[RMDB]
RNA sequence: GGGAACGACUCGAGUAGAGUCGAAAACGCGCACACUGCCGCUGCGUAUACUGCCAUUGCGUAUACUGCCACUGCGUAUGCUGCCACUGCGUAUACUGCCGCUACAUACACUAUCACUACAUAUGCUGUCAGUACAUACGCUAUCGCGGCGUAUGCCCUGGGGUUGCGAUUUCGAUCGCAACCCCAGAAAAGAAACAACAACAACAAC
Reactivity to 2A3 in 0.01 (KOAc 150mM, MgCl2 10mM, bicine 150mM(pH8.5), 24C), signal-to-noise 2, nucleotides 027 to 156: c030g010c000g050c000a050c000a000c090u180g040c010c020g040c020u050g030c000g000u010a020u000a020c070u110g040c030c040a240u250u300g000c050g030u010a010u030a080c150u200g070c000c050a080c100u080g000c020g000u020a000u020g010c040u040g010c010c010a110c110u070g000c000g030u000a020u050a070c040u060g040c030c060g020c070u080a040c000a130u150a030c090a070c150u130a100u150c030a080c120u140a000c030a080u090a000u110g000c030u090g080u150c000a000g000u050a050c030a060u020a020c000g000c030u050a040u110c060g010c040g030g000c000g000u000a020u000g020c030c000